[RMDB]
RNA sequence: GGGAACGACUCGAGUAGAGUCGAAAAUACAUGCUGAUCACAACGAGUACCUAUAUUGUCCUUUGAAAUGCGAAAUUGCCUAUUGUCAACGUUUUCGCGGUCGAAACAACCGGCAGCCUGUAAUCGACCACAUUUCAUCGUUCGCGAUGAAAUGUGGAAAAGAAACAACAACAACAAC
Reactivity to 2A3 in 0.01 (KOAc 150mM, MgCl2 10mM, bicine 150mM(pH8.5), 24C), signal-to-noise 2, nucleotides 027 to 126: u050a000c050a020u040g010c000u060g020a090u120c090a040c030a150a080c050g050a030g030u060a090c000c000u000a010u020a040u250u200g050u090c010c020u080u030u100g100a100a100a030u190g000c010g000a000a050a110u110u050g030c020c000u140a230u170u140g140u070c020a060a030c140g000u030u020u010u010c040g000c030g000g030u020c010g020a100a060a010c030a030a060c030c000g020g030c050a000g020c000c010u040g000u030a040a050u040c030g040a050
Reactivity to DMS in 0.01 (KOAc 150mM, MgCl2 10mM, bicine 150mM(pH8.5), 24C), signal-to-noise 1, nucleotides 027 to 126: u010a060c090a050u000g000c040u000g020a170u000c030a070c070a060a110c120g040a100g010u000a020c080c080u000a090u000a100u000u000g000u000c030c050u000u030u000g000a080a050a050u000g000c000g010a020a050a070u010u030g010c070c050u010a100u000u000g020u000c020a050a110c230g000u020u000u020u000c100g000c040g000g000u010c070g020a040a050a070c110a060a040c090c100g000g010c030a040g020c000c060u010g020u000a060a080u000c060g000a250
This 177-nucleotide RNA was probed chemically with 2A3 and DMS. It was measured as part of the RMDB library OK2TST. The RNA was probed in 150 mM KOAc, 10 mM MgCl2 and 150 mM bicine (pH 8.5) at 24 C.